Notes:
The record gives the reactivity of an RNA of 177 nucleotides to DMS and 2A3. Conditions: 150 mM KOAc, 10 mM MgCl2 and 150 mM bicine (pH 8.5), 24 C. The DMS profile rests on 4,078 reads.
[RMDB]
RNA sequence: GGGAACGACUCGAGUAGAGUCGAAAACGCACCUGGAGGCUUACCCAAAGUUUAUGAGCAGCUGUUAAUCUCUGAUGCAUUUCUCACCCUCCCAAUAAUGAAAAGUAGCUAUAAAGAUUGGACAGUGCCUUUGCACAUAAUUCGUUAUGUGCAAAGGAAAAGAAACAACAACAACAAC
Reactivity to DMS in 0.01 (KOAc 150mM, MgCl2 10mM, bicine 150mM(pH8.5), 24C), signal-to-noise 4, nucleotides 027 to 126: c160g020c060a060c040c020u010g020g010a070g010g000c020u000u000a100c020c030c020a120a130a100g010u010u000u000a090u020g020a120g020c060a090g030c030u010g000u010u000a060a060u010c030u010c050u000g010a080u000g000c040a090u000u000u010c030u000c060a160c030c010c020u000c000c010c030a090a080u020a080a120u000g000a050a040a040a070g010u000a060g000c020u010a110u000a040a060a060g000a070u000u000g010g010a030c050a060g000u010g010
Reactivity to 2A3 in 0.01 (KOAc 150mM, MgCl2 10mM, bicine 150mM(pH8.5), 24C), signal-to-noise 2, nucleotides 027 to 126: c010g020c010a030c030c060u050g080g040a020g040g050c040u030u070a080c000c000c000a040a030a050g080u130u110u050a150u150g070a040g010c050a050g000c000u030g000u050u050a060a080u040c010u000c010u030g030a030u050g020c050a080u000u110u000c030u050c000a100c030c000c010u030c050c030c050a070a100u190a080a050u050g070a000a070a000a040g070u040a040g000c000u010a010u020a180a060a000g020a060u040u060g030g010a020c000a000g020u010g040
It was measured as part of the RMDB library OK2TRN.